[RMDB]
RNA sequence: GGGAACGACUCGAGUAGAGUCGAAAAAUACCUCCUGUUAUAUGUAAUGACUUAUGUAUUUCAUAUGCGGAAUUAUGGAUCGUCAUCACCAUCUUUUAUUAAACGAAGAGUUAACUAUUCUUAAUAUUUUGAAAUGUUCUUUCGAGAACAUUUCAAAAAAAGAAACAACAACAACAAC
Reactivity to 2A3 in 0.01 (KOAc 150mM, MgCl2 10mM, bicine 150mM(pH8.5), 24C), signal-to-noise 3, nucleotides 027 to 126: a000u150a060c020c000u000c000c000u050g080u110u150a020u020a000u010g040u040a000a040u080g130a060c040u230u130a090u300g010u030a010u020u030u040c000a020u030a000u020g000c040g000g060a030a030u090u060a080u190g020g030a080u030c060g100u030c030a030u030c020a020c030c000a070u080c020u000u140u100u070a190u060u170a080a100a050c030g010a020a120g090a030g030u000u020a020a000c050u040a070u120u050c010u060u080a160a130u120a240u130